[RMDB]
RNA sequence: GGGAACGACUCGAGUAGAGUCGAAAAGAAACUCGUUUCGCGUUGGCUGCCUAAUUCAAGGAAUUAGAGUGCCUUCAUGCUAAGGGUUUGAUAUCUGCUAAAACCCGGUGCAUUCAUCAAUGCAGGUCUCAUCCAAAUGCCUUCGGGCAUUUGGAAACUUUAUGGCUGUGUUCGCACAGCCAUAAAGAAAAGAAACAACAACAACAAC
Reactivity to DMS in 0.01 (KOAc 150mM, MgCl2 10mM, bicine 150mM(pH8.5), 24C), signal-to-noise 1, nucleotides 027 to 156: g000a140a050a090c030u000c050g000u000u000u000c040g010c040g000u010u000g040g010c020u000g040c060c010u010a040a060u000u010c040a130a140g050g020a080a070u000u000a030g000a110g050u000g000c000c000u010u000c020a070u000g000c050u000a300a130g000g010g040u010u010u000g020a170u010a060u000c030u020g000c060u000a150a050a030a050c000c010c020g000g060u010g020c020a080u020u000c050a140u000c130a050a170u000g000c030a020g010g010u000c120u020c030a120u000c000c000a000a020a010u000g030c000c000u000u000c300g030g000g010c000a020u010u000u020g010g000a000a010a020
Reactivity to 2A3 in 0.01 (KOAc 150mM, MgCl2 10mM, bicine 150mM(pH8.5), 24C), signal-to-noise 2, nucleotides 027 to 156: g060a010a090a010c020u030c060g070u020u070u100c090g030c010g020u010u030g000g010c060u130g070c010c000u030a010a010u020u010c150a230a100g140g050a070a040u010u020a030g060a000g090u040g010c010c010u020u010c050a070u080g010c000u030a020a060g010g000g000u000u000u000g010a000u020a030u030c020u030g020c000u020a000a050a050a060c000c000c000g000g010u030g020c040a100u060u200c020a020u090c050a090a120u150g000c000a000g000g050u040c030u030c090a090u000c000c010a000a000a000u010g010c000c000u030u060c100g110g000g000c000a000u000u000u000g000g000a000a000a000

Structure probing data (DMS and 2A3) for a 207-nucleotide construct. For 2A3, 1,416 sequencing reads were counted. DMS adducts were read by reverse transcription with MarathonRT. The DMS profile rests on 2,395 reads.